RNA sequence: GGGAACGACUCGAGUAGAGUCGAAAAAUGAUCACCCCGUCCCAUGCGGAAGUUCGUGCUUCCGUCGAACGCGAAAGUCGGACGGCGGCCAUGAGUCGCAACGCAAAGCCGCGGCAAGUGGAGUUAGAAAAGCGUUUGAAGUUCGCUUCAAACGCAACCAUACAAGCUAGUUCGCUAGCUUGUAUGGAAAAGAAACAACAACAACAAC
Reactivity to 2A3 in 0.01 (KOAc 150mM, MgCl2 10mM, bicine 150mM(pH8.5), 24C), signal-to-noise 3, nucleotides 027 to 156: a000u170g030a040u080c040a120c010c020c000c000g000u020c030c000c020a130u170g000c000g010g010a000a000g010u190u300c170g190u300g080c000u020u020c000c000g010u000c020g010a100a050c100g010c020g100a080a120a060g080u140c010g020g000a010c000g020g000c070g050g000c000c000a090u080g000a000g010u010c000g020c040a040a050c070g000c100a140a150a000g070c070c000g020c090g000g020c030a070a000g000u010g060g050a050g010u140u060a020g070a040a180a050a000g000c000g000u000u000u000g000a000a000g010u030u090c150g100c100u010u000c000a000a000a000c010g000c000a000a000
Reactivity to DMS in 0.01 (KOAc 150mM, MgCl2 10mM, bicine 150mM(pH8.5), 24C), signal-to-noise 1, nucleotides 027 to 156: a150u020g010a160u030c030a040c000c000c000c000g020u000c000c000c040a150u000g010c000g050g000a040a040g000u000u000c260g020u010g000c000u000u010c000c000g040u000c020g120a000a020c060g050c060g010a060a100a300g000u000c070g000g020a050c000g000g000c080g000g010c000c000a090u000g000a300g020u000c010g040c040a060a030c000g000c060a070a130a300g020c080c010g030c020g040g050c000a070a300g000u000g000g000a160g030u020u000a240g000a140a120a130a280g100c030g050u020u000u010g000a000a030g020u000u000c260g020c000u000u000c000a000a000a000c000g050c000a020a010
This 207-nucleotide RNA was probed chemically with 2A3 and DMS.
Reactivities are given for positions 27 through 156.
Conditions: 150 mM KOAc, 10 mM MgCl2 and 150 mM bicine (pH 8.5), 24 C.
The DMS profile rests on 1,539 reads.
DMS adducts were read by reverse transcription with MarathonRT.
2A3 adducts were read by reverse transcription with SuperScript II with manganese.
The data come from the RNA Mapping Database (RMDB), library M2RFPK.